[RMDB]
RNA sequence: GGGAACGACUCGAGUAGAGUCGAAAAUGACAGGUCUUAUUAUUAGCAAGCUACGGUAGAAUCUUGUCUAGUGAUUUUACAAGAGAUUGAUAGACUCGCUUGAUUUGGGCUUGAGUUAUGUGUCAAAAUCAAGUUAAAACAAUACAUAGCCUAUGGUCAGUGCGAAGCAGUUCGCUGCUUCGCACUGAAAAGAAACAACAACAACAAC
Reactivity to 2A3 in 0.01 (KOAc 150mM, MgCl2 10mM, bicine 150mM(pH8.5), 24C), signal-to-noise 1, nucleotides 027 to 156: u070g020a040c040a030g010g010u080c020u080u080a190u090u090a050u060u170a140g130c080a100a040g000c030u030a010c000g020g000u020a010g030a050a010u030c010u110u300g020u000c000u000a020g060u010g090a020u020u000u050u000a020c020a020a000g010a020g020a020u100u220g110a030u030a010g000a000c000u000c000g000c000u010u020g000a000u010u000u010g020g000g000c010u010u030g000a030g050u040u000a020u020g020u000g000u010c000a000a000a000a000u010c010a000a000g000u000u020a000a020a020a030c060a020a000u120a030c000a000u010a010g020c000c020u020a020u150g130g000u010